[RMDB]
RNA sequence: GGGAACGACUCGAGUAGAGUCGAAAAGAUAUGGAAUCAGUAGGGAGAGCUGUUUCGGAAACGAAACUGCUCGAGGAUCUACGAUUCCUAAGUCAAACACACAUUUGUGUUCGCACAAAUGUGUGAACGAAAGGUUAUCGUUCGCGAUAACCUUUCGAAAAGAAACAACAACAACAAC
Reactivity to DMS in 0.01 (KOAc 150mM, MgCl2 10mM, bicine 150mM(pH8.5), 24C), signal-to-noise 2, nucleotides 027 to 126: g000a020u000a030u020g010g000a030a030u000c000a120g030u000a020g000g020g020a020g010a030g010c000u000g010u000u010u010c000g030g000a010a010a010c000g000a020a000a000c000u000g000c000u000c000g010a060g010g010a050u000c000u000a010c010g000a030u000u000c000c000u000a000a060g010u000c030a140a190a300c010a000c000a010c010a010u000u000u000g000u000g000u010u010c300g040c020a020c000a000a000a010u000g030u000g010u000g010a040a130
Reactivity to 2A3 in 0.01 (KOAc 150mM, MgCl2 10mM, bicine 150mM(pH8.5), 24C), signal-to-noise 1, nucleotides 027 to 126: g000a010u010a000u050g000g020a000a000u020c050a160g050u020a010g000g000g040a050g010a010g020c000u020g000u010u010u010c010g000g000a000a000a010c000g000a000a010a010c010u010g000c000u010c000g000a040g030g000a010u000c000u000a000c030g000a000u000u030c000c000u010a020a000g010u000c040a030a210a010c010a000c000a000c000a010u000u000u000g040u010g040u100u110c300g110c110a000c000a000a010a000u000g000u000g000u010g020a060a030
Source: RMDB library TTRDES, as collected in RNAgym. This 177-nucleotide RNA was probed chemically with DMS and 2A3. For 2A3, 6,223 sequencing reads were counted. In probing experiments dimethyl sulfate is read out at A N1 and C N3, which are open when not base-paired. The reactions ran in a buffer of 150 mM KOAc, 10 mM MgCl2 and 150 mM bicine (pH 8.5), at 24 C.